Chemical mapping of a 177-nucleotide RNA with DMS and 2A3.

RNA sequence: GGGAACGACUCGAGUAGAGUCGAAAAAUCUAGUAAGGUAAAUGACCGGACGAGCGUUACAUAAAACGCAUACCUAACUAAUGAAGAAUUUGAAACUGUACAAUGUGAAUGACGAAAGGGUGGAUACGCAUGUCGAAGAUUUCGAUCUUCGACAUGCAAAAGAAACAACAACAACAAC
Reactivity to DMS in 0.01 (KOAc 150mM, MgCl2 10mM, bicine 150mM(pH8.5), 24C), signal-to-noise 3, nucleotides 027 to 126: a010u020c050u000a030g010u010a080a020g000g040u000a060a080a150u010g000a170c070c000g000g010a120c090g020a110g040c020g000u030u000a040c180a180u040a070a040a020a050c070g030c040a280u020a030c010c030u070a090a040c060u010a060a050u070g000a120a040g010a090a050u000u010u000g030a130a060a080c090u000g040u010a030c080a070a030u040g000u010g030a080a000u010g000a080c040g010a020a060a090g000g020g030u000g040g000a130u040a020c160
Reactivity to 2A3 in 0.01 (KOAc 150mM, MgCl2 10mM, bicine 150mM(pH8.5), 24C), signal-to-noise 2, nucleotides 027 to 126: a000u050c050u050a050g000u010a060a030g010g000u000a000a040a090u110g010a210c020c100g070g000a030c080g060a090g000c070g020u040u070a070c060a200u300a020a210a000a000c010g000c000a000u060a030c000c010u000a010a000c000u140a090a180u130g020a100a040g090a170a150u170u120u080g100a030a020a000c050u050g040u160a000c040a060a070u040g000u000g200a140a000u180g040a000c010g030a010a010a010g020g000g000u000g000g000a030u060a000c020

Notes: 2A3 adducts were read by reverse transcription with SuperScript II with manganese. It was measured as part of the RMDB libraries RFM100 and RFMREP. For 2A3, 1,223 sequencing reads were counted. Reactivities are given for positions 27 through 126.